[RMDB]
RNA sequence: GGGAACGACUCGAGUAGAGUCGAAAAUGGCGCUAAAGCGGGCUACUUAUACUUUGCCGUUAGCGCGAUAGCAUUUAUAAUGUACGCGUUAAUGAGUAGGAGGGCGUGAAGGUCGUGAAGAAGCUCGCGUGUGAGAAGAGUUCGCUCUUCUCACACGAAAAGAAACAACAACAACAAC
Reactivity to 2A3 in 0.01 (KOAc 150mM, MgCl2 10mM, bicine 150mM(pH8.5), 24C), signal-to-noise 4, nucleotides 027 to 126: u060g040g020c020g010c100u130a090a060a030g010c010g020g000g020c000u070a060c010u180u060a060u030a180c000u050u100u100g010c000c000g010u020u010a010g000c000g000c010g020a070u060a020g000c000a000u000u070u040a240u130a130a030u020g000u000a010c010g000c000g000u000u000a000a010u050g030a040g130u040a060g020g100a020g020g020g000c020g010u050g050a030a050g100g020u070c030g040u070g030a020a020g050a000a020g040c020u010c040g050
Reactivity to DMS in 0.01 (KOAc 150mM, MgCl2 10mM, bicine 150mM(pH8.5), 24C), signal-to-noise 3, nucleotides 027 to 126: u000g010g020c050g020c060u020a040a100a160g000c010g030g000g000c010u000a060c040u000u010a140u030a090c030u010u000u010g020c020c020g010u000u000a010g010c020g000c010g010a100u000a120g020c010a000u000u000u070a120u010a120a040u010g000u000a080c000g010c000g000u000u000a020a020u000g010a100g000u000a010g020g010a070g000g010g000c050g040u000g010a080a100g040g020u000c040g040u010g000a030a100g020a160a030g010c010u000c000g000